[RMDB]
RNA sequence: GGGAACGACUCGAGUAGAGUCGAAAACUCGAUCCGAAGCGCUUGGAAUGUUCGCUUGGCUGGAUGACCACCGGUACGACGCGUAGCUGCAGGAAUCGUCGCAUAAAGCAGCUCAACUAGCCGAGCCGUUGAACUAUGCUUUCGAGCAUAGUUCAACAAAAGAAACAACAACAACAAC
Reactivity to DMS in 0.01 (KOAc 150mM, MgCl2 10mM, bicine 150mM(pH8.5), 24C), signal-to-noise 2, nucleotides 027 to 126: c020u000c040g010a090u010c000c020g020a090a070g030c120g000c070u000u010g000g020a130a090u000g010u010u010c120g000c040u000u000g000g010c030u000g000g010a060u000g010a090c070c060a090c110c040g010g000u000a090c070g010a080c030g020c130g030u000a060g020c030u010g000c050a120g010g010a110a050u000c060g000u000c040g010c110a080u010a080a110a080g000c020a040g020c020u000c020a040a070c050u000a040g020c020c020g010a130g000c060c240
Reactivity to 2A3 in 0.01 (KOAc 150mM, MgCl2 10mM, bicine 150mM(pH8.5), 24C), signal-to-noise 2, nucleotides 027 to 126: c010u010c020g040a080u030c030c020g040a040a030g030c010g040c130u060u040g000g080a100a030u110g110u170u160c060g000c010u020u020g010g030c040u020g000g030a080u070g040a020c010c040a050c000c050g100g000u140a090c040g070a040c120g080c020g080u040a000g000c030u050g000c000a040g000g180a040a090u110c060g100u050c040g000c090a050u090a140a090a000g000c010a000g010c010u000c010a030a090c010u020a010g000c010c000g000a000g020c000c040
Conditions: 150 mM KOAc, 10 mM MgCl2 and 150 mM bicine (pH 8.5), 24 C.
The record gives the reactivity of an RNA of 177 nucleotides to DMS and 2A3.
For DMS, 1,397 sequencing reads were counted.
Source: RMDB library OK2TST, as collected in RNAgym.